The data come from the RNA Mapping Database (RMDB), library OK1LIB.
An RNA of 177 nucleotides, treated with 2A3 and DMS and read out base by base.
For DMS the reverse transcriptase was MarathonRT.
Conditions: 150 mM KOAc, 10 mM MgCl2 and 150 mM bicine (pH 8.5), 24 C.
RNA sequence: GGGAACGACUCGAGUAGAGUCGAAAACAUCCGUGCAAAUCGAGGUGGUUGCGCGGAACGUUCUGGAUAGAACGAAAGCAAUCAUUUGCGACGGUAUGUCAAUAGACUGACAUGUGAAUAAGGGCACGUAAGUACUUACUUUCGAGUAAGUACUUACAAAAGAAACAACAACAACAAC
Reactivity to 2A3 in 0.01 (KOAc 150mM, MgCl2 10mM, bicine 150mM(pH8.5), 24C), signal-to-noise 9, nucleotides 027 to 126: c030a050u020c010c010g010u010g000c010a020a020a100u080c030g050a040g030g070u050g000g000u010u010g000c070g000c040g090g040a030a040c000g000u000u010c010u070g190g200a160u130a300g000a010a000c000g020a110a030a000g020c000a010a020u030c010a020u020u020u140g080c030g030a020c010g020g030u100a010u000g000u000c000a010a070u060a120g090a060c050u010g000a010c000a020u050g020u020g090a090a040u140a080a050g020g030g020c020a010c060
Reactivity to DMS in 0.01 (KOAc 150mM, MgCl2 10mM, bicine 150mM(pH8.5), 24C), signal-to-noise 6, nucleotides 027 to 126: c140a080u030c030c010g010u000g020c010a030a060a150u020c050g010a070g000g050u010g010g010u000u000g010c000g020c020g020g030a060a060c010g000u010u000c000u000g020g020a120u060a030g010a000a010c020g000a070a120a180g000c000a010a010u000c020a020u000u000u020g000c010g000a040c110g020g010u030a010u000g000u000c020a040a100u030a140g000a190c240u000g000a020c010a010u000g000u030g000a080a070u020a090a120g000g000g000c030a040c080

The 2A3 profile rests on 21,502 reads.